About this RNA: The record gives the reactivity of an RNA of 177 nucleotides to DMS and 2A3. The DMS profile rests on 1,732 reads. It was measured as part of the RMDB library OK1LIB. The 2A3 profile rests on 1,115 reads. For DMS the reverse transcriptase was MarathonRT. For 2A3 the reverse transcriptase was SuperScript II with manganese. Reactivities are given for positions 27 through 126.
RNA sequence: GGGAACGACUCGAGUAGAGUCGAAAAUAUACAUCAGAAGUCGGCACAACUCCCGACUCGCGGUGAGCGAUGCAGCGUAGCUGUAGCUACGCAGCUGCUGUGCGGAUGGCUAGCAAAAGCUAGCCUACGCUCCGGCAUAGUUCGCUAUGCCGGAGCGAAAAGAAACAACAACAACAAC
Reactivity to DMS in 0.01 (KOAc 150mM, MgCl2 10mM, bicine 150mM(pH8.5), 24C), signal-to-noise 2, nucleotides 027 to 126: u030a050u010a170c020a000u000c030a050g030a160a020g000u000c010g000g000c300a170c110a140a110c220u070c100c000c000g000a110c010u000c030g010c300g000g040u010g000a050g070c020g010a080u010g010c030a040g000c010g030u000a040g000c000u020g030u040a080g000c000u000a000c000g010c000a010g000c000u000g060c050u060g000u020g000c060g000g030a200u010g000g010c000u040a000g000c000a090a100a150a190g000c000u000a000g000c020c000u000a000
Reactivity to 2A3 in 0.01 (KOAc 150mM, MgCl2 10mM, bicine 150mM(pH8.5), 24C), signal-to-noise 2, nucleotides 027 to 126: u130a000u040a030c010a040u030c050a050g030a080a050g120u010c020g000g150c150a020c040a300a240c140u050c040c000c000g020a000c000u000c000g000c070g030g050u070g040a020g000c010g140a110u170g030c000a000g010c020g010u010a020g020c030u100g100u230a120g040c000u010a010c020g000c000a000g000c000u030g000c000u000g010u010g000c000g010g020a090u080g000g000c000u000a000g000c010a110a200a080a000g000c020u000a000g010c020c000u000a010